[RMDB]
The record gives the reactivity of an RNA of 177 nucleotides to 2A3.
RNA sequence: GGGAACGACUCGAGUAGAGUCGAAAAUACAGAAGCUCUUCUGUAGCCACUCUGGUUCUUCCCUGCCCCGACGUUUGACACUUCACGUCAGCCGUCCGAGAAUCGUUACAGAAGCUCUUCUGUAGCCGCAGAUGGAGGCAUUCGUGCCUCCAUCUGCAAAAGAAACAACAACAACAAC
Reactivity to 2A3 in 0.01 (KOAc 150mM, MgCl2 10mM, bicine 150mM(pH8.5), 24C), signal-to-noise 2, nucleotides 027 to 126: u050a010c000a010g010a000a010g000c040u010c000u050u010c010u030g030u040a000g030c040c020a060c050u040c050u090g100g000u140u050c010u020u090c090c030c030u030g040c010c010c000c000g020a030c050g000u000u030u070g010a010c030a000c110u080u260c100a040c190g040u020c000a000g030c020c000g000u000c000c060g050a030g100a070a040u060c040g000u000u000a010c000a020g010a000a000g020c000u020c030u040u000c000u000g000u020a020g000c000c040

Background:
For 2A3, 859 sequencing reads were counted. 2A3 adducts were read by reverse transcription with SuperScript II with manganese. Conditions: 150 mM KOAc, 10 mM MgCl2 and 150 mM bicine (pH 8.5), 24 C. It was measured as part of the RMDB library OK1LIB.